[RMDB]
RNA sequence: GGGAACGACUCGAGUAGAGUCGAAAAGGCAUGUCGAGGACCCGUCACCUCGUUAAUCAAUGGGAAAAACGUAACUGCAAACGACGAUACGUUCGCACUGGCAGCCUAAGGGCCGCCGUCCUCUGCCUAGUUCACUGACGGGCUAGUGUCGCAAGACGGAUAUUCUAUGGUUCGCCAUAGAAUAUCCAAAAGAAACAACAACAACAAC
Reactivity to DMS in 0.01 (KOAc 150mM, MgCl2 10mM, bicine 150mM(pH8.5), 24C), signal-to-noise 3, nucleotides 027 to 156: g020g010c040a080u010g020u000c040g020a040g000g000a080c000c010c010g010u010c040a110c030c010u000c020g030u010u000a070a120u010c070a090a080u010g010g020g000a080a060a060a070a090c100g030u000a060a110c060u010g020c020a050a060a060c020g010a120c030g010a200u000a110c020g010u010u000c000g000c050a060c070u010g010g040c010a030g000c130c020u010a100a150g060g020g040c010c010g050c040c030g010u000c020c030u010c060u000g000c020c020u000a070g010u000u000c040a110c080u010g000a050c030g000g020g030c060u000a070g010u000g000u000c030g020c050a040a110g010a150c150
Reactivity to 2A3 in 0.01 (KOAc 150mM, MgCl2 10mM, bicine 150mM(pH8.5), 24C), signal-to-noise 9, nucleotides 027 to 156: g050g010c060a040u090g030u130c000g000a000g000g000a020c000c000c010g000u010c010a020c000c000u010c010g080u020u050a050a040u080c060a020a040u070g010g030g000a100a050a010a000a010c070g030u090a080a050c050u110g020c100a120a090a070c070g090a030c050g070a110u040a090c010g040u030u040c030g000c050a020c050u060g010g000c000a000g000c010c020u080a110a160g050g000g000c010c020g000c010c010g030u030c000c010u040c020u030g000c000c000u040a050g030u100u120c040a040c150u080g020a020c040g000g000g020c000u050a050g010u040g050u120c050g020c080a050a030g040a020c040